Source: RMDB library OK2TRN, as collected in RNAgym.
Structure probing data (DMS) for a 177-nucleotide construct.
The DMS profile rests on 1,925 reads.
DMS adducts were read by reverse transcription with MarathonRT.
RNA sequence: GGGAACGACUCGAGUAGAGUCGAAAAUCAACCUGGUGGAUUUAGCAGGAUCUGAAAGGCAAAAAGAUACCCAUGCAGAAGGGAUGAGAUUGAAGGAAGCAGGUAACAUAAAUCGAUCAUUGAGCUGAGUAAACCUGCUAUUCGUAGCAGGUUUACUAAAAGAAACAACAACAACAAC
Reactivity to DMS in 0.01 (KOAc 150mM, MgCl2 10mM, bicine 150mM(pH8.5), 24C), signal-to-noise 3, nucleotides 027 to 126: u000c100a140a130c030c010u000g000g040u010g000g010a070u000u000u010a080g030c080a070g010g010a080u010c040u010g010a110a110a040g000g020c060a020a070a060a110a040g010a100u010a080c060c030c020a070u010g000c040a130g010a080a060g000g000g000a080u000g010a080g010a110u010u000g010a060a070g010g000a050a140g000c030a020g000g020u010a070a050c080a060u010a040a070a070u000c040g010a050u010c050a070u000u000g000a050g010c070u000g020